[RMDB]
RNA sequence: GGGAACGACUCGAGUAGAGUCGAAAAUAGAGGAAGUGGAAGAUGCUUUUUAGGCAAGAAAUCUAUCUAGCUUGUGUGCACCUGCAGGUCAUCUAGAGUAAAGGGAACGUGGACUGGAAUCAGUGACAGGGCACUGGAGUCUCAUGCCAAAAGGAGAGAUCACGUGAUAGUUCGCUAUCACGUGAUCAAAAGAAACAACAACAACAAC
Reactivity to DMS in 0.01 (KOAc 150mM, MgCl2 10mM, bicine 150mM(pH8.5), 24C), signal-to-noise 1, nucleotides 027 to 156: u010a160g000a090g010g010a070a100g030u020g000g010a080a130g000a060u010g020c000u000u000u000u000u000a080g040g040c030a100a080g000a070a090a080u000c090u010a020u010c050u010a080g000c040u000u000g010u000g020u000g020c070a060c050c020u000g000c000a090g050g000u000c060a050u010c010u000a080g000a140g030u000a070a100a090g000g000g000a060a090c090g050u010g020g020a100c030u000g010g010a140a090u010c090a070g020u000g010a100c050a090g020g000g060c040a010c040u010g010g000a090g000u010c020u020c080a090u010g030c040c030a050a090a100a060g010g000a100g000a180
Reactivity to 2A3 in 0.01 (KOAc 150mM, MgCl2 10mM, bicine 150mM(pH8.5), 24C), signal-to-noise 5, nucleotides 027 to 156: u160a020g030a030g020g030a070a020g060u030g040g040a060a030g020a040u060g010c030u100u110u070u090u120a060g040g000c040a030a040g060a080a090a030u060c040u090a080u010c030u030a050g040c020u080u050g040u020g030u060g060c020a040c060c030u060g030c030a030g010g060u040c030a060u030c060u030a020g020a010g110u100a050a110a040g040g020g020a040a030c050g050u090g010g020a030c030u030g010g070a040a040u070c010a010g000u010g060a030c020a030g010g000g000c010a020c040u020g040g010a030g030u010c020u010c060a040u100g040c010c000a040a090a010a010g060g020a070g010a020